[RMDB]
RNA sequence: GGGAACGACUCGAGUAGAGUCGAAAAGAGAUAGACUAAGAAAUAAAUUAGGAUUCUCAAAAAAUGAAAUCAUCUAUUUAUUUCCAUCGACUGGACACUAUAGAAAAGGUUUUGAAGAAUUAAAAGCAACUAUACACUCUUUCGAGAGUGUAUAGUUAAAAGAAACAACAACAACAAC
Reactivity to DMS in 0.01 (KOAc 150mM, MgCl2 10mM, bicine 150mM(pH8.5), 24C), signal-to-noise 1, nucleotides 027 to 126: g000a130g050a130u000a080g000a300c050u050a110a060g000a100a060a060u000a030a030a170u000u000a030g000g000a170u000u000c090u000c000a000a000a020a220a090a090u000g020a010a000a050u020c000a050u000c000u020a020u000u020u000a080u030u020u000c000c050a060u020c100g000a220c270u000g000g000a050c200a090c120u020a090u000a090g000a040a140a110a190g000g020u000u000u000u000g000a000a140g000a070a060u000u030a030a080a160a100g000c160
This 177-nucleotide RNA was probed chemically with DMS. Conditions: 150 mM KOAc, 10 mM MgCl2 and 150 mM bicine (pH 8.5), 24 C. In probing experiments dimethyl sulfate is read out at A N1 and C N3, which are open when not base-paired. Values cover nucleotides 27 to 126. DMS adducts were read by reverse transcription with MarathonRT. For DMS, 474 sequencing reads were counted. Reactivities are rounded to 0.1 and cut off at 0 and 3.